Chemical mapping of a 207-nucleotide RNA with DMS and 2A3.
[RMDB]
RNA sequence: GGGAACGACUCGAGUAGAGUCGAAAAGUUCGCAUCCGUAGCAGUGUAGAAAUUCUUCGUGUUUACCUGGCUCUUCAGUCUAAACUGCAGGUGAGUAUUGCAGCAAAUCGUUUUUAGCUGGAGGUGGUCUUUUAAGCAUUAAUUUAGUACCUAAACACAUACCUCACGGAUUCGUCCGUGAGGUAUGAAAAGAAACAACAACAACAAC
Reactivity to DMS in 0.01 (KOAc 150mM, MgCl2 10mM, bicine 150mM(pH8.5), 24C), signal-to-noise 1, nucleotides 027 to 156: g000u000u010c030g020c040a130u000c020c050g040u000a120g040c070a130g020u010g030u000a060g010a060a070a080u000u000c020u000u000c090g020u010g000u000u000u000a070c010c030u010g020g040c010u010c020u010u000c010a050g000u000c050u000a040a050a040c030u010g030c000a010g030g010u010g030a250g020u000a110u000u000g030c040a050g010c020a060a040a160u010c090g040u000u000u020u000u020a080g020c040u000g010g020a050g030g070u010g010g000u000c010u000u000u000u010a050a040g030c030a050u000u000a020a120u000u000u000a090g000u000a060c040c030u000a040a040a080c100a190
Reactivity to 2A3 in 0.01 (KOAc 150mM, MgCl2 10mM, bicine 150mM(pH8.5), 24C), signal-to-noise 3, nucleotides 027 to 156: g030u050u080c030g010c050a020u010c050c070g050u090a020g010c060a030g030u020g050u160a040g080a070a110a060u120u060c030u040u060c030g020u010g020u030u020u000a070c010c020u010g030g000c040u020c010u110u050c010a040g040u040c020u050a050a070a100c000u030g010c000a040g040g080u080g030a040g030u080a020u130u070g000c000a010g030c020a030a030a130u120c050g020u050u000u000u020u170a020g020c000u020g010g010a040g020g050u110g020g000u040c020u060u120u020u060a040a010g020c010a010u000u110a050a090u120u180u130a040g040u060a020c000c040u090a120a090a000c030a000

Values are in units of 0.01, from 0 to 300, in steps of 10. For 2A3, 1,617 sequencing reads were counted. Conditions: 150 mM KOAc, 10 mM MgCl2 and 150 mM bicine (pH 8.5), 24 C. The data come from the RNA Mapping Database (RMDB), library OK3TST.